[RMDB]
RNA sequence: GGGAACGACUCGAGUAGAGUCGAAAAUUGUUGUUCAGCCAGUUGGUGUUGUAGACACUGAGUGGGGUAACAUGUUAACGGGCAUUGCUGCACGUCCUCCACCAGGUGAACAGUUUAAGCACCUCGUACCACCGGUGGUUCGCCACCGGUAAAAGAAACAACAACAACAAC
Reactivity to DMS in 0.01 (KOAc 150mM, MgCl2 10mM, bicine 150mM(pH8.5), 24C), signal-to-noise 3, nucleotides 027 to 129: u030u020g020u000u090g060u000u060c100a100g040c050c070a040g040u030u010g100g000u020g060u030u000g010u020a070g000a110c140a030c000u100g020a270g040u050g010g040g040g030u020a100a010c050a080u060g040u070u000a150a000c050g020g080g050c060a160u080u060g030c150u000g040c030a010c130g050u040c190c020u040c020c030a040c030c030a000g080g000u070g020a090a040c190a000g000u030u000u030a140a130g010c060a070c060c020u060c160g010u050a040c200c160
Reactivity to 2A3 in 0.01 (KOAc 150mM, MgCl2 10mM, bicine 150mM(pH8.5), 24C), signal-to-noise 2, nucleotides 027 to 129: u000u000g050u010u000g000u010u050c010a030g000c020c000a200g080u050u140g050g000u010g000u060u050g120u110a000g000a060c010a000c020u050g000a020g040u040g000g160g000g000u070a130a040c060a140u210g230u230u120a000a000c000g030g100g020c000a000u000u300g060c080u050g010c030a000c020g000u000c000c030u000c000c000a000c000c000a000g000g000u120g050a060a010c030a070g020u000u000u110a000a000g000c020a000c000c010u010c020g030u090a070c000c000
The record gives the reactivity of an RNA of 170 nucleotides to DMS and 2A3. For 2A3, 2,294 sequencing reads were counted. Source: RMDB library 15KLIB, as collected in RNAgym. For DMS the reverse transcriptase was MarathonRT. For 2A3 the reverse transcriptase was SuperScript II with manganese. The reactions ran in a buffer of 150 mM KOAc, 10 mM MgCl2 and 150 mM bicine (pH 8.5), at 24 C. The DMS profile rests on 4,187 reads.